Chemical mapping of a 170-nucleotide RNA with 2A3 and DMS. The data come from the RNA Mapping Database (RMDB), library 15KLIB. The DMS profile rests on 7,363 reads. Values cover nucleotides 27 to 129.
RNA sequence: GGGAACGACUCGAGUAGAGUCGAAAAGAGACUCGGGAACGCCUAGCAUCUGAGGGACAAAGCCGCCCCCGGGCGCUCCCCUCGGAGGUCCACUGGGUGGGUUCACAUCCCCAACCCGCGGGCCGGCAUGGGAGGCGGUUCGCCGCCUCCAAAAGAAACAACAACAACAAC
Reactivity to 2A3 in 0.01 (KOAc 150mM, MgCl2 10mM, bicine 150mM(pH8.5), 24C), signal-to-noise 3, nucleotides 027 to 129: g040a010g000a000c030u000c040g000g000g020a090a060c070g000c000c000u030a060g050c060a080u000c010u000g010a030g000g010g020a050c020a050a090a000g050c070c040g000c020c020c000c010c020g040g020g000c000g000c000u030c000c000c010c000u010c000g030g000a030g010g010u010c010c010a020c090u090g000g000g010u010g000g010g000u140u180c130a080c030a150u170c000c000c000c000a100a210c000c000c000g000c040g000g000g000c000c010g000g000c020a030u100g110
Reactivity to DMS in 0.01 (KOAc 150mM, MgCl2 10mM, bicine 150mM(pH8.5), 24C), signal-to-noise 4, nucleotides 027 to 129: g000a060g000a090c050u030c000g010g050g050a080a090c090g000c000c010u000a160g020c030a210u020c020u010g010a050g020g030g070a090c050a070a100a060g030c030c040g020c110c010c010c190c130g090g010g030c090g020c070u010c070c000c020c050u000c000g000g010a090g020g000u020c000c010a060c080u030g030g000g030u000g010g010g030u010u030c230a130c300a120u100c200c020c010c040a010a090c000c000c010g010c070g000g000g000c040c040g000g040c090a190u030g030